[RMDB]
Description: Chemical mapping of a 177-nucleotide RNA with 2A3. The data come from the RNA Mapping Database (RMDB), library RFM100. For 2A3 the reverse transcriptase was SuperScript II with manganese. For 2A3, 697 sequencing reads were counted. The reactions ran in a buffer of 150 mM KOAc, 10 mM MgCl2 and 150 mM bicine (pH 8.5), at 24 C.
RNA sequence: GGGAACGACUCGAGUAGAGUCGAAAAUUCCUUCUUGACUUUUUAGCAGUUCUGGGUAAAUAUUGAUUUGCCCCCAGUUUACCUUCUCCCUGACUGGCCAUUUGCAGACUCAGGAACUAGCCUCUGUAAGAAUGCUCCAUUUCGAUGGAGCAUUCUUAAAAGAAACAACAACAACAAC
Reactivity to 2A3 in 0.01 (KOAc 150mM, MgCl2 10mM, bicine 150mM(pH8.5), 24C), signal-to-noise 1, nucleotides 027 to 126: u000u010c000c010u000u040c020u090u090g040a100c030u000u010u100u020u210a030g050c020a070g050u080u070c060u070g000g000g070u050a060a130a030u190a180u130u180g150a160u080u040u040g010c000c000c000c000c090a050g000u030u020u060a100c000c000u140u080c030u060c000c000c010u030g040a020c000u030g070g000c040c010a070u010u010u120g000c000a000g020a010c000u020c020a000g050g040a010a060c030u020a040g000c000c000u010c000u010g000u020